[RMDB]
This 177-nucleotide RNA was probed chemically with DMS and 2A3. The DMS profile rests on 2,553 reads. Values cover nucleotides 27 to 126. For 2A3 the reverse transcriptase was SuperScript II with manganese.
RNA sequence: GGGAACGACUCGAGUAGAGUCGAAAAUGUGACAGCACAGUGGAGCACUAUGACACAACUUUGGAGCAUUGUGACACCAUAGUGGAGCACUGUGACAGUACAGUGGAGUACUAUGAAACCACAGUGAACUCCCACGAUAGUUCGCUAUCGUGGGAGUAAAAGAAACAACAACAACAAC
Reactivity to DMS in 0.01 (KOAc 150mM, MgCl2 10mM, bicine 150mM(pH8.5), 24C), signal-to-noise 4, nucleotides 027 to 126: u010g000u010g060a140c140a100g020c020a010c020a030g000u010g000g010a120g020c010a030c030u010a010u000g010a160c040a010c050a050a030c110u010u010u020g010g010a100g010c170a240u000u000g020u010g010a250c130a150c300c010a010u000a000g030u000g010g000a130g020c020a020c000u000g010u000g000a090c080a100g010u000a010c010a080g040u000g020g010a120g010u000a020c030u010a120u020g010a110a090a110c100c000a010c010a100g010u010g010a130
Reactivity to 2A3 in 0.01 (KOAc 150mM, MgCl2 10mM, bicine 150mM(pH8.5), 24C), signal-to-noise 3, nucleotides 027 to 126: u120g030u100g060a050c060a030g040c010a010c000a010g000u020g030g180a090g110c010a000c030u010a010u050g080a000c030a000c010a050a050c070u170u200u300g190g050a110g050c060a090u010u070g000u020g000a000c020a030c100c040a000u020a000g000u030g010g130a100g030c030a010c030u000g000u000g000a000c000a000g000u020a000c000a020g000u040g060g030a100g020u040a020c060u070a080u140g050a110a040a000c010c000a030c000a030g010u010g080a020